[RMDB]
Chemical mapping of a 177-nucleotide RNA with DMS and 2A3. It was measured as part of the RMDB library OK2TRN.

RNA sequence: GGGAACGACUCGAGUAGAGUCGAAAAACGACAGCCUCCCCUCGGAAAAGGAGACCACCUGGUCGAAGAGGGUGUAGGCAUCGCGCAAGGAUCCGUCGGCUUCCUUUGCGAUCCAGGAAAGAGCCUCAUUCUCUAGUGACUUCGGUCACUAGAGAAUAAAAGAAACAACAACAACAAC
Reactivity to DMS in 0.01 (KOAc 150mM, MgCl2 10mM, bicine 150mM(pH8.5), 24C), signal-to-noise 3, nucleotides 027 to 126: a130c040g000a050c080a170g030c010c010u000c030c000c000c000u000c010g010g000a060a080a110a080g030g010a240g010a050c060c060a190c180c210u010g000g000u000c020g010a210a180g000a020g000g000g030u010g010u010a010g020g010c010a030u000c000g000c000g030c050a030a020g000g000a020u010c030c040g000u000c170g000g000c080u000u000c010c000u000u000u010g010c010g000a080u000c040c030a060g010g020a030a090a060g010a080g010c030c020u000c160
Reactivity to 2A3 in 0.01 (KOAc 150mM, MgCl2 10mM, bicine 150mM(pH8.5), 24C), signal-to-noise 3, nucleotides 027 to 126: a000c030g030a020c040a050g000c000c010u010c000c000c000c000u010c000g050g100a050a090a070a100g170g100a130g020a050c010c010a080c090c250u250g030g030u020c020g020a060a020g020a000g000g010g000u050g010u040a000g020g000c010a000u000c000g000c010g010c000a000a010g040g010a030u040c070c050g180u130c150g130g000c020u020u030c000c000u040u070u080g020c010g000a060u010c020c000a020g110g070a060a080a030g100a030g030c010c020u060c010
DMS adducts were read by reverse transcription with MarathonRT.
The reactions ran in a buffer of 150 mM KOAc, 10 mM MgCl2 and 150 mM bicine (pH 8.5), at 24 C.